[RMDB]
RNA sequence: GGGAACGACUCGAGUAGAGUCGAAAAGAAAGAUCCAUGUCCCCGGGGGCCGUGGAUGGCCCUCUGACAAAACUGUGCUAAUAUCUGAUCCGGCCCGGACAUCUUUGAGUUUUGUAGCCACGCCAUCGCGUCUCUACCACUCUCAUAGAUGAGACGCGACUUGUUGGACAUUCGUGUCCAACAAGUCAAAAGAAACAACAACAACAAC
Reactivity to 2A3 in 0.01 (KOAc 150mM, MgCl2 10mM, bicine 150mM(pH8.5), 24C), signal-to-noise 1, nucleotides 027 to 156: g050a010a120a000g050a040u040c020c020a100u110g010u020c000c020c000c030g030g000g000g000g000c030c010g050u090g240g120a150u250g030g000c000c010c020u000c020u020g010a020c020a000a100a080a070c110u110g050u100g130c000u020a120a160u040a120u180c030u030g030a060u000c010c060g070g000c120c070c030g040g000a010c020a020u060c050u120u020u010g020a010g010u050u000u070u080g000u070a000g000c010c000a000c020g050c050c020a220u130c070g000c020g000u000c000u000c000u000a020c000c040a020c020u000c000u000c020a010u050a140g020a030u110g010a020g040a090c030g020c000